[RMDB]
RNA sequence: GGGAACGACUCGAGUAGAGUCGAAAAACUAGAUCUAGCUCUAGUGAUCCAGCUAGUCUGUACAUGCUAGGCUAGCAUGCCAUGCAUGCUACCAUGGUGACGAUCGACUGGAUCGUACGCUCGGUACCAGAGCACCGUGUUUCGACACGGUGCUCUGAAAAGAAACAACAACAACAAC
Reactivity to 2A3 in 0.01 (KOAc 150mM, MgCl2 10mM, bicine 150mM(pH8.5), 24C), signal-to-noise 1, nucleotides 027 to 126: a010c020u030a040g010a030u080c020u100a020g020c060u010c000u010a020g000u010g070a010u030c000c010a010g010c020u070a020g060u000c050u060g100u070a090c000a040u130g160c000u060a070g010g000c030u020a000g000c000a000u000g000c070c040a190u300g040c000a010u000g040c000u040a020c060c000a020u090g000g090u060g020a040c040g010a070u140c080g190a220c080u010g000g000a010u000c000g000u050a030c020g000c000u000c060g070g010u060a060c030
Reactivity to DMS in 0.01 (KOAc 150mM, MgCl2 10mM, bicine 150mM(pH8.5), 24C), signal-to-noise 2, nucleotides 027 to 126: a120c000u000a020g000a040u010c090u000a080g000c070u000c030u000a010g030u010g010a050u000c010c010a080g000c030u000a150g000u010c000u010g020u010a170c030a010u000g000c060u000a200g000g010c300u000a000g010c010a000u000g010c010c110a180u000g010c000a020u010g030c030u000a000c000c000a170u000g000g000u000g000a050c020g010a020u010c070g010a130c030u000g010g000a010u000c010g040u000a030c150g000c100u000c060g010g050u010a040c100